[RMDB]
The record gives the reactivity of an RNA of 207 nucleotides to 2A3. Values are in units of 0.01, from 0 to 300, in steps of 10. The RNA was probed in 150 mM KOAc, 10 mM MgCl2 and 150 mM bicine (pH 8.5) at 24 C.
RNA sequence: GGGAACGACUCGAGUAGAGUCGAAAAGCGGCGGGGACGGGCUCCCGGCGGCAGCGGCGGCUCGGGACCCGCGGGCAAGUCGGGCAGCGGCACGUCGGCGUGGAGCUCGGGCAGGGGCUGGUGCUGCGCGCGGAGCUGACUGGCAAAGGCUAUCACCACUAGUCGUAAAUUUCGAUUUACGACUAGUAAAAGAAACAACAACAACAAC
Reactivity to 2A3 in 0.01 (KOAc 150mM, MgCl2 10mM, bicine 150mM(pH8.5), 24C), signal-to-noise 1, nucleotides 027 to 156: g050c030g060g030c090g050g020g000g000a030c070g010g040g000c020u000c020c000c000g030g020c000g000g000c030a010g060c010g110g010c000g030g000c000u010c000g020g010g080a130c000c000c000g030c000g000g000g030c080a160a150g000u050c040g030g060g010c080a130g080c060g050g000c020a040c130g020u060c030g050g020c000g020u180g020g010a170g040c000u020c000g010g020g000c010a030g010g000g020g020c020u050g000g260u020g000c000u010g000c070g030c030g030c100g000g000a020g010c010u010g030a050c030u030g030g000c030a050a060a030g070g000c020u040a010u170c060a020c080c020